[RMDB]
RNA sequence: GGGAACGACUCGAGUAGAGUCGAAAACAUCCACUGCUACGGCAGUGGAUGAACGAGGUAGGUACGCCUACCUCGAAAGGUGGAUGUAACCAUAAACAUUAAACGUCCAUGGUACGCCAUGGACGAAUAUUAUGACCCGUUUCGACGGGUCAUAAUAAAAAGAAACAACAACAACAAC
Reactivity to DMS in 0.01 (KOAc 150mM, MgCl2 10mM, bicine 150mM(pH8.5), 24C), signal-to-noise 2, nucleotides 027 to 126: c000a000u000c000c000a030c000u000g000c000u000a060c270g010g000c000a030g030u010g000g020a000u000g000a030a060c030g010a010g000g050u030a020g000g000u020a060c200g040c030c000u010a010c000c010u010c000g000a010a040a090g020g010u000g000g020a070u000g010u010a300a030c020c000a130u010a020a040a110c030a040u000u010a080a100a220c020g010u000c000c000a000u010g000g020u000a100c290g050c000c000a000u000g000g020a000c000g010a000a030
Reactivity to 2A3 in 0.01 (KOAc 150mM, MgCl2 10mM, bicine 150mM(pH8.5), 24C), signal-to-noise 2, nucleotides 027 to 126: c010a000u000c010c000a000c000u000g030c000u030a070c170g160g030c000a000g010u050g020g000a000u010g000a000a000c010g000a000g000g000u000a010g040g020u040a020c220g060c070c000u000a010c010c000u010c000g000a000a030a030g050g000u070g070g020a050u050g050u120a040a110c010c020a060u180a010a060a010c030a030u070u120a140a140a070c000g000u000c000c010a000u010g000g030u070a040c250g070c060c000a000u010g040g000a000c010g000a000a000